[RMDB]
RNA sequence: GGGAACGACUCGAGUAGAGUCGAAAAGAGUCGUCGCCGGCGAAGAUGGGCUCUCCGAGCUCUCCGGCGGUGAGCUCCUCCAAAUGUGGCGCUGGCUUUCUCUUUUUCGCGUUUCGAACCGUACUUUAUAGCGGAUCAUAUUCGUAUGAUCCGCUAUAAAAGAAACAACAACAACAAC
Reactivity to 2A3 in 0.01 (KOAc 150mM, MgCl2 10mM, bicine 150mM(pH8.5), 24C), signal-to-noise 1, nucleotides 027 to 126: g010a000g000u030c040g070u100c000g000c000c000g010g020c180g160a140a020g090a070u300g000g000g000c000u010c020u050c060c040g000a000g000c010u030c020u040c020c000g000g000c020g000g010u020g000a010g040c010u020c000c000u020c000c000a020a100a170u250g020u130g050g030c010g000c010u020g000g000c000u000u050u000c040u000c000u020u020u010u070u060c080g010c000g070u000u100u090c070g030a060a020c030c030g010u110a040c030u030u020u020
Notes:
The data come from the RNA Mapping Database (RMDB), library OK1LIB. Chemical mapping of a 177-nucleotide RNA with 2A3. Reactivities are given for positions 27 through 126.